RNA sequence: GGGAACGACUCGAGUAGAGUCGAAAAUCCUGCUAGUUCGCUAGCAGGAAAAACAAAACUGUACACGCAGUACAGAAAAACAAAAACAAUACAAAAUGCGUAAAAGCACAGGCUUCGGCCUGUGCAAGUCACCACUAAUGUUCGCAUUAGUGGUGACAAAAGAAACAACAACAACAAC
Reactivity to 2A3 in 0.01 (KOAc 150mM, MgCl2 10mM, bicine 150mM(pH8.5), 24C), signal-to-noise 2, nucleotides 027 to 126: u000c000c010u000g000c010u000a010g040u030u060c170g040c120u000a000g030c000a000g000g010a080a000a020a040a000c010a000a040a010a070c010u010g000u010a000c040a000c050g050c030a020g000u010a000c000a000g060a100a150a000a000a000c060a000a100a000a000a000c050a040a080u160a120c050a040a110a060a050u090g010c010g100u210a040a080a070a110g030c000a000c000a000g000g000c000u040u150c220g080g000c000c000u010g000u020g000c000a000a000

This 177-nucleotide RNA was probed chemically with 2A3. High 2A3 reactivity points to a flexible backbone, as in loops and unpaired stretches. The RNA was probed in 150 mM KOAc, 10 mM MgCl2 and 150 mM bicine (pH 8.5) at 24 C. The 2A3 profile rests on 1,708 reads.